[RMDB]
RNA sequence: GGGAACGACUCGAGUAGAGUCGAAAACGCGGGGUUCCUCCGAUGCCUGUGGUCGACGCCAUCCGCCGCGGCGCUCAGGCGAUCCUGCCUACGCCGGCACCGCUCGGCGGGGCACUGGUGGAGGAGAAGUGGAGUCAUGAUUCGUCAUGACUCCACUAAAAGAAACAACAACAACAAC
Reactivity to 2A3 in 0.01 (KOAc 150mM, MgCl2 10mM, bicine 150mM(pH8.5), 24C), signal-to-noise 4, nucleotides 027 to 126: c090g000c040g000g000g030g030u120u020c020c010u050c030c010g070a050u210g040c000c010u020g000u080g090g070u170c020g020a090c010g030c010c050a160u100c060c030g070c050c060g020c030g000g010c020g040c060u040c020a010g000g000c010g030a060u070c000c020u020g010c000c010u160a180c000g000c000c000g010g000c040a180c180c070g030c120u060c010g000g000c000g000g000g000g020c010a020c040u080g010g000u060g010g000a020g010g020a020g020a040
Reactivity to DMS in 0.01 (KOAc 150mM, MgCl2 10mM, bicine 150mM(pH8.5), 24C), signal-to-noise 2, nucleotides 027 to 126: c080g010c030g010g020g010g020u120u030c010c000u030c020c020g000a100u040g000c030c000u010g000u020g020g010u020c020g000a030c060g000c000c010a090u010c090c100g000c040c110g020c010g010g000c030g020c030u000c050a020g010g020c000g010a060u040c010c040u000g000c030c000u000a150c010g000c010c000g010g000c010a180c240c170g050c090u040c020g000g000c000g010g000g000g030c020a000c090u010g000g030u030g000g020a060g010g000a080g000a050